[RMDB]
RNA sequence: GGGAACGACUCGAGUAGAGUCGAAAACGCAGAGGGUUCUGAUAACAAAGAACCUAGAUAGCCGCAUCGGCAUUAUAGGAUGUAGUCGGUGAGCCGGAAUGCCUGCAUCGUAAGCCUAUAAGUAAAUUUAAGUGUAAUCACUUCGGUGAUUACACAACUUAAUUUUGACGUUCGCGUCAAAAUUAAGAAAAGAAACAACAACAACAAC
Reactivity to DMS in 0.01 (KOAc 150mM, MgCl2 10mM, bicine 150mM(pH8.5), 24C), signal-to-noise 1, nucleotides 027 to 156: c130g060c070a110g000a160g020g000g010u000u020c020u000g020a170u040a140a130c300a160a080a100g020a040a000c000c000u000a080g010a210u010a070g020c000c020g000c100a080u020c060g020g030c020a060u000u000a050u000a020g000g020a100u000g010u000a040g000u000c000g000g000u000g010a080g010c000c010g070g010a080a070u010g030c060c020u000g050c020a050u000c010g020u000a070a140g010c020c000u000a020u000a040a040g000u010a100a100a200u000u000u030a050a130g010u000g000u000a000a010u010c000a000c000u010u000c200g010g000u000g000a010u000u000a010c000a010c000a020a090
Reactivity to 2A3 in 0.01 (KOAc 150mM, MgCl2 10mM, bicine 150mM(pH8.5), 24C), signal-to-noise 3, nucleotides 027 to 156: c060g020c040a040g060a070g110g020g020u000u010c030u050g050a140u090a270a030c020a050a090a000g010a010a000c020c000u020a020g020a100u090a020g000c020c010g050c120a110u100c070g010g000c020a010u020u070a040u080a060g040g000a050u060g050u090a020g080u100c020g000g030u030g030a010g120c040c020g060g050a100a030u080g040c000c000u030g050c000a030u030c020g030u020a020a030g020c000c010u050a060u030a160a040g070u080a030a120a240u160u300u100a200a030g000u000g000u000a000a000u000c000a000c000u000u040c150g030g000u000g010a010u000u000a000c000a000c000a010a010